[RMDB]
RNA sequence: GGGAACGACUCGAGUAGAGUCGAAAAGGUGCUCUGAGUGGAGUGCUCUACUGAGAUUAUAAAAUAGAAGGUAAGCUAUUAUCUCUUACAACAGGGCAGGGCUUGUUGGAAUAGGCGGUAAAGUCUAAAAACUACCUCACCUUCGGGUGAGGUAGAACUACGAUACUUCCUUCGGGAAGUAUCGUAGAAAAGAAACAACAACAACAAC
Reactivity to 2A3 in 0.01 (KOAc 150mM, MgCl2 10mM, bicine 150mM(pH8.5), 24C), signal-to-noise 2, nucleotides 027 to 156: g070g040u020g020c000u000c000u000g050a020g060u040g000g020a010g030u040g000c020u080c050u060a090c020u040g040a000g040a100u070u150a110u300a230a190a080a010u170a060g040a060a030g030g010u060a000a020g010c010u050a070u160u040a060u140c020u010c030u100u240a030c010a150a010c000a100g030g010g000c000a000g050g010g030c060u070u010g000u000u030g040g000a080a040u030a030g040g020c060g000g050u160a050a170a000g010u040c020u060a010a020a020a080a060c020u000a000c000c000u000c000a000c000c020u000u060c130g120g040g000u000g000a000g000g000u000a000g000a000a000
This 207-nucleotide RNA was probed chemically with 2A3.
Values cover nucleotides 27 to 156.
It was measured as part of the RMDB library M2RFPK.